[RMDB]
RNA sequence: GGGAACGACUCGAGUAGAGUCGAAAAUUCAGAGAAGGAUCCUGACUCGGUGGUUUGUGCAGUGACAUUUGGCAGUGUUUUCUCGGCAAGCGAGUCUUUGAGGCUGCCCUCAUGCUGCUCAGUGGGCGGUGAUAGGUACAUUCGUGUACCUAUCACCAAAAGAAACAACAACAACAAC
Reactivity to DMS in 0.01 (KOAc 150mM, MgCl2 10mM, bicine 150mM(pH8.5), 24C), signal-to-noise 4, nucleotides 027 to 126: u000u000c060a110g010a120g010a110a070g000g020a070u000c030c010u010g010a080c050u010c030g010g020u000g020g000u000u000u000g020u000g020c030a050g010u000g010a080c090a060u010u000u010g010g020c000a050g020u010g010u010u010u000u000c020u000c050g010g000c100a070a120g020c060g010a060g010u010c070u000u000u000g020a100g010g020c060u000g000c070c010c080u000c080a060u000g020c030u000g010c030u000c030a080g020u010g010g010g010c150
Reactivity to 2A3 in 0.01 (KOAc 150mM, MgCl2 10mM, bicine 150mM(pH8.5), 24C), signal-to-noise 1, nucleotides 027 to 126: u000u000c030a010g000a000g020a190a050g090g030a050u050c010c000u040g020a040c020u000c060g000g080u060g040g030u020u060u100g070u040g040c030a040g000u000g090a080c020a080u020u070u100g030g000c000a030g020u020g050u050u020u060u030c020u000c020g070g000c070a110a000g120c010g040a030g030u000c060u070u040u110g020a050g020g030c030u030g000c000c030c000u040c020a010u090g000c010u020g010c000u020c030a040g050u040g050g010g040c030